[RMDB]
RNA sequence: GGGAACGACUCGAGUAGAGUCGAAAAGGGGGGCAGAUGUACGUGAAUCGCAACGAGAUAUUCAACGGCGCGCUGGCAAUCACAAACAUCAUCCUGGAUCUCGACAUCGCCCUGAAGGAGCCCGUCCGUAUACGAUAGAUUUCGAUCUAUCGUAUACAAAAGAAACAACAACAACAAC
Reactivity to DMS in 0.01 (KOAc 150mM, MgCl2 10mM, bicine 150mM(pH8.5), 24C), signal-to-noise 9, nucleotides 027 to 126: g010g020g000g010g010g010c060a080g020a040u000g010u000a110c130g020u000g010a080a080u000c070g020c080a090a150c110g010a090g000a090u000a090u000u000c100a080a120c140g010g010c070g020c050g020c070u000g000g010c060a080a080u010c080a050c120a090a100a070c110a040u000c060a080u000c020c030u000g010g000a050u000c030u000c020g010a080c050a030u000c030g000c010c000c010u000g010a080a080g020g010a120g000c010c010c020g010u000c070c110
Reactivity to 2A3 in 0.01 (KOAc 150mM, MgCl2 10mM, bicine 150mM(pH8.5), 24C), signal-to-noise 7, nucleotides 027 to 126: g090g030g010g010g000g000c030a100g020a010u020g010u050a060c030g010u020g070a120a040u070c050g000c110a010a050c060g040a030g020a110u100a090u150u170c060a090a040c040g030g000c010g000c010g010c060u040g040g000c040a010a060u120c030a030c030a100a130a030c030a050u100c010a030u040c010c010u030g040g010a030u010c020u010c030g010a010c000a010u020c010g010c000c000c000u020g060a080a040g070g050a030g030c000c010c010g030u020c030c040

This 177-nucleotide RNA was probed chemically with DMS and 2A3. Conditions: 150 mM KOAc, 10 mM MgCl2 and 150 mM bicine (pH 8.5), 24 C. Reactivities are given for positions 27 through 126.